RNA sequence: GGGAACGACUCGAGUAGAGUCGAAAAUCGGGUUUCUUCGGAAACCCGAAAAUAAAAUCAGCGGUAAAAAAGCUCGCGUUAUAACCGCUGAACGCGAGCUUAAAAGAUCGCAGUUCGCUGCGAUCAACUUACAGUAUGUGUUCGCACAUACUGUAAGAAAAGAAACAACAACAACAAC
Reactivity to DMS in 0.01 (KOAc 150mM, MgCl2 10mM, bicine 150mM(pH8.5), 24C), signal-to-noise 2, nucleotides 027 to 126: u000c000g010g010g000u000u000u000c000u000u010c160g020g010a010a020a000c000c020c000g030a000a010a060a070u000a030a040a100a070u000c030a030g000c070g010g000u000a000a040a100a120a050a030g000c000u000c000g020c000g000u010u020a100u000a170a050c030c050g000c040u010g010a000a000c000g000c000g000a020g010c020u020u000a020a040a120a090g000a010u000c010g030c000a020g020u000u010c140g030c010u000g000c000g010a010u000c000a070a100
Reactivity to 2A3 in 0.01 (KOAc 150mM, MgCl2 10mM, bicine 150mM(pH8.5), 24C), signal-to-noise 1, nucleotides 027 to 126: u020c010g000g020g010u020u000u010c030u050u050c210g050g010a000a010a000c010c000c010g000a020a000a010a000u020a000a030a000a080u070c030a020g030c020g070g040u070a110a130a060a060a120a000g010c010u000c000g010c010g000u010u000a080u040a180a030c020c000g000c040u020g030a000a000c000g010c000g020a000g010c000u010u010a010a010a000a030g000a000u000c000g000c000a020g000u000u060c210g010c100u000g010c000g000a010u000c000a000a020

Overview
An RNA of 177 nucleotides, treated with DMS and 2A3 and read out base by base. For 2A3 the reverse transcriptase was SuperScript II with manganese.